[RMDB]
RNA sequence: GGGAACGACUCGAGUAGAGUCGAAAAUUCGGUCCUCUGGAGCGGACCGUUUGCUCCGUCAGGAUGUGGAGGUAUCGCGCCCUCCUCUGCGCGUAUGUACAUCGAUACGGUUAUGUCGCCUUUGUGUCGGCGUUUGACACUUACACAUACCGGAUAACAUUAUGCUAUGCUUCGGCAUAGCAUAAUGAAAAGAAACAACAACAACAAC
Reactivity to 2A3 in 0.01 (KOAc 150mM, MgCl2 10mM, bicine 150mM(pH8.5), 24C), signal-to-noise 5, nucleotides 027 to 156: u030u010c000g020g000u000c010c020u070c100u240g220g060a080g030c060g020g000a000c000c000g000u020u010u050g030c040u030c030c040g080u090c050a030g030g000a000u010g010u010g010g010a030g020g010u020a020u050c000g000c000g000c010c000c010u000c000c000u000c000u020g050c090g030c000g040u220a020u060g030u030a030c020a130u030c050g150a180u120a300c110g050g000u070u050a040u030g050u050c010g000c040c010u020u030u010g160u060g000u070c010g000g020c030g010u030u020u070g000a000c000a000c000u010u060a000c000a000c000a010u090a300c000c000g010g020a060u090a120a010
Reactivity to DMS in 0.01 (KOAc 150mM, MgCl2 10mM, bicine 150mM(pH8.5), 24C), signal-to-noise 3, nucleotides 027 to 156: u000u000c000g020g010u010c000c010u000c090u020g030g010a140g040c300g030g010a050c020c060g050u000u000u000g000c020u000c050c040g020u000c070a070g000g020a070u010g010u000g010g000a040g020g040u000a030u000c030g010c010g010c030c020c020u000c000c020u000c020u000g010c050g000c010g060u000a060u000g050u000a040c110a100u000c080g010a260u000a070c080g020g010u000u010a040u000g000u000c040g040c020c060u010u000u000g020u010g020u000c010g040g000c080g000u010u000u000g030a020c020a020c020u000u020a060c000a020c010a030u000a070c010c010g020g020a070u010a070a280